Structure probing data (DMS) for a 177-nucleotide construct.

[RMDB]
RNA sequence: GGGAACGACUCGAGUAGAGUCGAAAACUGGAGGAGAGCUGGUAUGGUGAGAUACACUCCUCAUUGCUGAAGGCUAGCAAACGUGGACAGCUUCCGGACAUUCGGCGUUUUACUCUGGUUAAACGAAAGGGGUACUGAUAUUCGUAUCAGUACCCCUAAAAGAAACAACAACAACAAC
Reactivity to DMS in 0.01 (KOAc 150mM, MgCl2 10mM, bicine 150mM(pH8.5), 24C), signal-to-noise 1, nucleotides 027 to 126: c050u000g000g010a080g050g010a090g010a120g000c050u010g010g010u000a050u000g010g060u010g000a140g000a160u000a060c110a140c050u000c030c010u000c000a080u000u000g000c010u000g030a140a190g000g010c080u010a040g020c080a030a030a140c150g000u020g000g000a040c020a030g000c050u000u000c060c000g000g010a110c090a150u000u000c020g050g020c020g010u000u000u000u000a050c020u000c050u010g010g010u000u000a030a060a110c110g020a110a110
The reactions ran in a buffer of 150 mM KOAc, 10 mM MgCl2 and 150 mM bicine (pH 8.5), at 24 C.